This 177-nucleotide RNA was probed chemically with DMS and 2A3. The DMS profile rests on 2,361 reads. 2A3 adducts were read by reverse transcription with SuperScript II with manganese. The reactions ran in a buffer of 150 mM KOAc, 10 mM MgCl2 and 150 mM bicine (pH 8.5), at 24 C.
[RMDB]
RNA sequence: GGGAACGACUCGAGUAGAGUCGAAAAAUGUUUGGUCCCAUCCCCAAGGCCAGGCACCCGGACAACUCUCCGGUCAUGAGGCCCAAGAGGAUGCCAGGCGAGAGCGUGCAGGACCACGCGAGGAGGCGUAGAGGCCAAUAUUCGUAUUGGCCUCUACAAAAGAAACAACAACAACAAC
Reactivity to DMS in 0.01 (KOAc 150mM, MgCl2 10mM, bicine 150mM(pH8.5), 24C), signal-to-noise 3, nucleotides 027 to 126: a130u010g020u000u010u000g020g010u010c040c020c050a150u000c010c000c010c020a290a240g010g000c000c000a030g010g000c020a050c260c000c010g000g010a040c140a090a090c170u010c150u000c050c080g000g010u000c060a200u000g000a090g000g010c010c010c070a100a110g020a100g000g000a050u000g000c000c030a100g020g000c020g000a050g000a100g010c030g010u000g020c110a100g000g000a170c090c010a050c050g030c020g030a080g000g000a090g020g000c170
Reactivity to 2A3 in 0.01 (KOAc 150mM, MgCl2 10mM, bicine 150mM(pH8.5), 24C), signal-to-noise 2, nucleotides 027 to 126: a010u100g060u030u030u030g020g000u080c000c030c000a090u070c030c010c000c000a020a010g030g020c000c000a010g070g170c030a010c020c050c000g040g010a040c060a240a190c150u040c010u020c100c030g000g000u100c020a080u110g040a040g040g010c020c010c000a090a040g030a030g060g030a000u030g010c010c070a020g020g060c010g030a090g000a010g070c010g010u040g000c080a050g030g080a040c060c010a000c030g030c000g010a090g050g050a070g060g050c070